[RMDB]
RNA sequence: GGGAACGACUCGAGUAGAGUCGAAAAGGUAGGGCAUUCGUGCCCUACCACACCUCAAAGCAGAUUGGCGAGGACGACGUCGCGGCCCACGUUUACCAACAACUACUCUCUCCUUCGGGAGAGAGAACGUAUAUCGUAGUUUCGACUACGAUAUACGAAAAGAAACAACAACAACAAC
Reactivity to 2A3 in 0.01 (KOAc 150mM, MgCl2 10mM, bicine 150mM(pH8.5), 24C), signal-to-noise 9, nucleotides 027 to 126: g010g000u010a000g010g000g010c020a010u010u090c200g110u040g000c000c000c000u000a000c000c000a000c000a000c000c000u050c060a100a120a030g070c050a030g070a290u130u160g060g010c030g020a050g030g040a050c040g010a020c040g040u040c020g000c030g060g050c010c010c000a040c020g010u030u060u070a180c040c020a040a060c010a020a020c040u150a080c000u020c000u000c000u010c010c000u020u080c210g080g000g000a000g000a000g000a000g000a000a000
Reactivity to DMS in 0.01 (KOAc 150mM, MgCl2 10mM, bicine 150mM(pH8.5), 24C), signal-to-noise 8, nucleotides 027 to 126: g010g010u000a010g010g000g030c000a040u000u010c220g010u000g000c010c000c000u000a000c000c000a040c160a070c020c010u000c100a070a130a130g000c090a080g000a110u000u010g020g030c050g010a100g010g000a100c060g000a060c080g020u010c050g020c060g000g000c010c010c020a200c060g000u000u000u000a130c030c020a080a050c170a050a040c120u000a150c000u000c000u000c000u000c000c000u000u000c160g000g010g010a000g000a010g000a010g000a020a060
Description: Chemical mapping of a 177-nucleotide RNA with 2A3 and DMS. The DMS profile rests on 13,858 reads. It was measured as part of the RMDB library M2PK50.